[RMDB]
RNA sequence: GGGAACGACUCGAGUAGAGUCGAAAAGACGCCUGUGUGGCGAAGCGAGCAUGCGAAAGAGCCGCACAGUCCAUCUAAUAUAAAGCGGCCAGAUGGAUUGCUCGCGAAAAGAUCCAUAUCACUGAGACGUCAGUACCUGAUUCGUCAGGUACUGACGAAAAGAAACAACAACAACAAC
Reactivity to DMS in 0.01 (KOAc 150mM, MgCl2 10mM, bicine 150mM(pH8.5), 24C), signal-to-noise 2, nucleotides 027 to 126: g000a060c090g000c020c010u060g020u000g070u000g020g050c040g000a090a030g000c000g000a040g000c070a100u010g020c180g040a170a140a160g000a060g000c050c020g000c000a130c000a060g000u000c050c130a020u000c010u020a140a090u050a120u030a120a010a100g060c050g000g030c010c220a030g000a090u030g000g000a050u000u010g000c030u010c000g000c000g000a080a010a030a260g000a020u090c000c080a080u000a180u030c110a020c100u000g000a140g000a180
Reactivity to 2A3 in 0.01 (KOAc 150mM, MgCl2 10mM, bicine 150mM(pH8.5), 24C), signal-to-noise 3, nucleotides 027 to 126: g100a000c030g110c000c010u100g080u070g090u120g140g000c010g040a050a000g000c000g000a010g000c020a000u070g010c030g070a180a040a050g100a040g030c000c010g000c020a030c000a010g030u000c000c010a010u000c020u120a120a290u150a120u080a230a230a000g020c030g010g050c080c000a010g000a060u040g020g000a000u000u070g000c000u000c030g030c000g000a000a000a000a130g020a020u000c030c030a020u040a020u190c040a030c120u140g050a060g050a120